An RNA of 177 nucleotides, treated with DMS and 2A3 and read out base by base. 2A3 adducts were read by reverse transcription with SuperScript II with manganese. For DMS, 3,283 sequencing reads were counted. For 2A3, 1,416 sequencing reads were counted. Reactivities are rounded to 0.1 and cut off at 0 and 3. The RNA was probed in 150 mM KOAc, 10 mM MgCl2 and 150 mM bicine (pH 8.5) at 24 C. Source: RMDB library OK2TST, as collected in RNAgym.
[RMDB]
RNA sequence: GGGAACGACUCGAGUAGAGUCGAAAACAAUUAAUCCAUAUAUGUAAGGAGCAAAGACUGAGAGUAAAGCAGCAGGAUUUUUAGCUCCGCCUCUUCUACUAACAAGUUCUCUGAUUCUAGGUAAGUCUAUUAACUGGUAGUUCGCUACCAGUUAAUAAAAAGAAACAACAACAACAAC
Reactivity to DMS in 0.01 (KOAc 150mM, MgCl2 10mM, bicine 150mM(pH8.5), 24C), signal-to-noise 4, nucleotides 027 to 126: c060a100a090u010u000a090a090u010c040c020a070u000a120u020a080u000g000u000a090a120g020g010a030g020c050a070a060a040g000a060c040u010g010a040g010a070g010u000a030a070a160g000c300a040g020c020a030g000g000a050u000u010u000u020u010a130g010c050u000c010c010g010c080c030u010c020u010u000c030u010a030c020u010a040a050c090a080a140g010u000u000c010u000c030u010g000a060u000u000c040u010a070g010g010u000a060a110g020u000c070
Reactivity to 2A3 in 0.01 (KOAc 150mM, MgCl2 10mM, bicine 150mM(pH8.5), 24C), signal-to-noise 2, nucleotides 027 to 126: c020a010a060u180u280a070a020u050c030c040a030u060a000u000a030u160g040u070a100a050g000g020a010g000c010a040a040a000g020a040c030u020g000a030g020a010g170u120a080a120a110g020c040a010g060c010a000g000g080a050u080u140u040u120u300a040g010c010u000c020c020g000c010c000u050c040u120u020c010u080a120c020u040a140a020c030a110a050g030u090u020c000u030c050u060g060a060u090u000c010u070a010g020g050u120a090a030g040u000c030